[RMDB]
RNA sequence: GGGAACGACUCGAGUAGAGUCGAAAAAAAGCAAGGUUCGAUCGAUUCAGACUAUUGUUAAAUAUUUCAUCAUCCAACUUUAGCAUGACAUCAUGCGAUGAGAUCAUGCGAUGAGCUAAUGCGAUGAGAUCAUGCGAUGAGCUAAUGCGAUGAGAUCCUUCUGUUAAAAUUUCGAUUUUAACAGAAGAAAAGAAACAACAACAACAAC
Reactivity to DMS in 0.01 (KOAc 150mM, MgCl2 10mM, bicine 150mM(pH8.5), 24C), signal-to-noise 4, nucleotides 027 to 156: a050a050a120g010c030a040a070g010g000u000u000c030g020a130u000c110g020a210u000u000c030a100g000a070c070u000a100u010u010g000u000u000a070a080a100u000a060u000u000u000c020a120u010c000a040u000c010c020a020a020c010u000u000u000a300g020c020a030u010g030a100c040a130u000c010a050u010g020c120g000a070u000g000a090g000a080u010c000a030u000g000c080g010a100u000g010a090g010c000u000a080a060u010g020c050g000a040u000g010a050g000a060u000c030a040u000g020c020g010a080u000g030a120g020c020u000a040a080u000g010c070g010a060u010g010a100g010a150u010c040
Reactivity to 2A3 in 0.01 (KOAc 150mM, MgCl2 10mM, bicine 150mM(pH8.5), 24C), signal-to-noise 9, nucleotides 027 to 156: a000a000a000g030c020a020a030g020g010u060u050c030g040a070u040c030g030a070u090u090c050a050g040a100c060u110a130u190u100g030u090u090a090a130a080u150a140u070u160u100c050a060u000c010a000u000c030c010a020a030c050u030u030u020a010g000c010a030u050g070a090c010a060u040c020a030u190g100c050g120a060u050g020a030g010a050u030c020a020u080g060c040g080a110u140g020a020g030c070u130a130a030u200g030c070g030a010u010g010a010g010a050u040c020a010u050g010c010g030a050u080g010a010g010c030u070a110a030u070g030c060g030a030u050g010a020g010a050u030c010

Source information:
The record gives the reactivity of an RNA of 207 nucleotides to DMS and 2A3. For 2A3, 9,661 sequencing reads were counted. For DMS, 10,060 sequencing reads were counted. High DMS reactivity at an A or C suggests that its Watson-Crick edge is free. For DMS the reverse transcriptase was MarathonRT. Values cover nucleotides 27 to 156.